[RMDB]
RNA sequence: GGGAACGACUCGAGUAGAGUCGAAAAUGCGCGAGACUCUAUGCCCGUGACAGAGUGGUAUCAGAGCAGACUUGCUUUACAUCAAUGCCCAGCAGUUCACUCGAUGAUGCACAACUCCAGGGCCAGCCUUAUAAACUCACUUCGGUGAGUUUAUAAGAAAAGAAACAACAACAACAAC
Reactivity to DMS in 0.01 (KOAc 150mM, MgCl2 10mM, bicine 150mM(pH8.5), 24C), signal-to-noise 5, nucleotides 027 to 126: u000g010c060g010c040g010a110g010a120c040u000c030u000a080u010g010c010c010c020g000u010g010a140c200a090g000a060g010u010g010g020u010a020u000c080a100g000a050g020c070a140g010a050c040u000u010g020c020u000u000u010a060c090a080u010c150a080a070u000g000c030c040c070a080g010c030a040g000u000u000c040a110c030u000c040g010a070u000g010a040u000g000c030a060c050a100a060c040u010c030c040a120g000g000g000c050c120a060g000c110
Reactivity to 2A3 in 0.01 (KOAc 150mM, MgCl2 10mM, bicine 150mM(pH8.5), 24C), signal-to-noise 5, nucleotides 027 to 126: u100g000c030g000c020g030a050g040a080c000u010c010u080a040u140g010c000c000c000g080u060g020a060c070a070g080a020g040u080g020g000u020a020u040c050a030g010a010g030c060a050g040a050c030u070u170g020c000u140u110u100a040c030a040u130c040a150a210u160g030c020c020c000a010g010c000a010g010u060u060c030a050c090u020c020g130a170u110g010a010u070g050c030a030c010a200a170c020u030c020c040a020g030g010g000c010c010a010g020c020
Notes: Structure probing data (DMS and 2A3) for a 177-nucleotide construct. Reactivities are given for positions 27 through 126. Conditions: 150 mM KOAc, 10 mM MgCl2 and 150 mM bicine (pH 8.5), 24 C. For 2A3, 5,506 sequencing reads were counted. The data come from the RNA Mapping Database (RMDB), library VIROID.